[RMDB]
RNA sequence: GGGAACGACUCGAGUAGAGUCGAAAAGGGGUCUGCGUCUCUAGCGUGUGCUUUGAUCGUGGGAGAACUGAAGCCUCCACGGUUUCACGGGAGCAUCGGGCGCAGACGGAGGCACCCAAAAGAUGGAAAUAAGUUCUUCGGAACUUAUUUCCAUCAACCAAAAGGAAGACUUCGGUCUUCCUUUUGGAAAAGAAACAACAACAACAAC
Reactivity to 2A3 in 0.01 (KOAc 150mM, MgCl2 10mM, bicine 150mM(pH8.5), 24C), signal-to-noise 3, nucleotides 027 to 156: g020g010g020g000u010c010u000g000c010g030u020c030u050c060u240a100g110c190g150u300g030u010g080c020u300u300u040g000a010u000c010g000u000g010g060g040a300g060a060a000c000u020g010a050a000g010c000c000u000c000c010a020c030g050g000u040u130u260c000a000c000g000g010g000a020g010c000a020u170c080g000g000g000c000g000c000a000g000a000c000g000g000a000g010g000c010a050c000c010c020a040a090a020a070g010a000u000g010g000a010a010a000u000a000a010g000u020u000c040u070u130c300g020g000a000a000c000u000u000a000u000u000u000c000c000a000u000c000a000a000
Reactivity to DMS in 0.01 (KOAc 150mM, MgCl2 10mM, bicine 150mM(pH8.5), 24C), signal-to-noise 1, nucleotides 027 to 156: g020g000g050g010u000c000u000g000c010g000u000c010u010c160u000a130g030c110g090u010g050u000g000c010u000u000u010g000a010u000c010g010u020g020g020g030a280g000a100a080c010u000g020a060a170g030c010c000u000c010c000a300c000g040g000u000u000u000c050a060c060g000g020g000a010g020c080a040u000c020g000g000g040c010g000c010a020g000a000c050g000g020a050g020g040c030a130c000c000c000a110a090a130a250g000a030u000g010g000a020a010a020u000a000a010g000u000u000c000u000u000c300g050g020a030a000c000u000u000a010u000u000u010c000c000a000u000c000a060a200
An RNA of 207 nucleotides, treated with 2A3 and DMS and read out base by base. It was measured as part of the RMDB library RNAMAK. Reactivities are rounded to 0.1 and cut off at 0 and 3. 2A3 adducts were read by reverse transcription with SuperScript II with manganese. The DMS profile rests on 2,595 reads.